[RMDB]
RNA sequence: GGGAACGACUCGAGUAGAGUCGAAAAGUCGAAACGCCGGAAGACUACAUGGGCAACGUGAUGGGCGACCUGUCGGGCCGUCGCGGCAUCGUCCAGGGCAUGGAAGACAUGGUCGGCGGCGGCAAGACUGGAGUAUCAGCUUCGGCUGAUACUCCAGAAAAGAAACAACAACAACAAC
Reactivity to DMS in 0.01 (KOAc 150mM, MgCl2 10mM, bicine 150mM(pH8.5), 24C), signal-to-noise 1, nucleotides 027 to 126: g030u000c050g000a120a150a080c050g000c000c010g000g030a200a130g000a090c040u000a090c090a070u000g000g010g000c090a050a130c020g040u000g000a100u000g000g010g000c000g010a020c120c150u030g000u000c020g020g000g000c030c000g030u000c030g040c000g010g000c000a070u000c080g030u000c000c010a010g020g010g030c060a020u000g010g000a110a150g000a030c220a040u000g030g010u000c010g020g040c040g000g050c000g000g020c030a030a070g000a050
Chemical mapping of a 177-nucleotide RNA with DMS. The DMS profile rests on 1,008 reads. Source: RMDB library OK2TST, as collected in RNAgym. Values are in units of 0.01, from 0 to 300, in steps of 10. For DMS the reverse transcriptase was MarathonRT. The RNA was probed in 150 mM KOAc, 10 mM MgCl2 and 150 mM bicine (pH 8.5) at 24 C.